RNA sequence: GGGAACGACUCGAGUAGAGUCGAAAAAGGGUAAACUGUCGUUCCUUAAUACUUUUGUUACUUAUGCACCGAAUUCGACUAUUUCGCAUUCAUUAGUGAUAGACGUGAAUCAACAAAUCCAAGGGGUUCGAAUGAGAAUGUUCGCAUUCUCAUUCGAAAAAGAAACAACAACAACAAC
Reactivity to DMS in 0.01 (KOAc 150mM, MgCl2 10mM, bicine 150mM(pH8.5), 24C), signal-to-noise 2, nucleotides 027 to 126: a030g000g030g000u010a150a090a140c080u010g010u020c000g040u000u000c000c000u000u030a090a040u020a160c150u000u030u010u000g010u000u000a020c040u000u010a020u010g000c100a060c110c040g010a060a100u010u000c070g000a020c210u000a080u000u000u000c000g020c150a130u020u030c030a060u000u010a060g010u020g000a080u020a040g000a060c070g000u000g000a000a010u000c110a080a050c060a040a050a050u010c060c060a090a040g000g000g010g040u010
Reactivity to 2A3 in 0.01 (KOAc 150mM, MgCl2 10mM, bicine 150mM(pH8.5), 24C), signal-to-noise 4, nucleotides 027 to 126: a000g170g000g010u120a140a120a060c110u050g020u010c000g000u050u020c010c000u030u070a180a030u140a090c010u060u130u070u110g010u070u020a020c000u050u060a020u120g040c040a060c020c040g020a040a040u010u010c050g030a010c080u010a150u030u100u040c040g000c010a000u030u030c020a000u010u120a030g010u030g040a060u010a070g090a030c020g030u000g070a010a020u060c020a020a090c020a040a010a060u030c100c030a030a070g050g040g000g000u000